[RMDB]
RNA sequence: GGGAACGACUCGAGUAGAGUCGAAAAAGUAUAUGCAAUAUGAGUGUGGCUGUGCUCCAGUAAAACUUGACUUACAAAAACAGGCUGUGGGCUACAGUAUUGUACUUUACCAAUACUUGACAUAGAAGAGGGGCAUUAAUGUGCCUGGAAUGUGCCAAUCACCUGCUAUCUUCGGAUAGCAGGUGAUAAAAGAAACAACAACAACAAC
Reactivity to 2A3 in 0.01 (KOAc 150mM, MgCl2 10mM, bicine 150mM(pH8.5), 24C), signal-to-noise 1, nucleotides 027 to 156: a000g160u200a150u040a040u140g050c020a020a040u040a040u220g100a060g040u030g000u030g030g000c000u000g000u010g060c070u030c010c000a030g000u080a000a100a010a020c030u010u080g040a030c000u000u180a020c080a020a080a020a120a020c010a000g080g000c000u000g000u210g030g010g000c070u060a030c000a010g010u010a060u090u080g010u000a000c100u070u070u160a030c170c000a000a000u300a010c030u040u060g030a060c000a030u080a030g150a110a000g020a020g000g020g000g090c000a000u000u040a060a050u300g050u050g000c000c000u000g020g020a090a000u050g050u080g050c070c000a000
Structure probing data (2A3) for a 207-nucleotide construct. 2A3 adducts were read by reverse transcription with SuperScript II with manganese. As a SHAPE reagent, 2A3 marks flexible, mostly unpaired nucleotides at the ribose 2'-OH. The data come from the RNA Mapping Database (RMDB), library OK3TST. For 2A3, 541 sequencing reads were counted. The reactions ran in a buffer of 150 mM KOAc, 10 mM MgCl2 and 150 mM bicine (pH 8.5), at 24 C.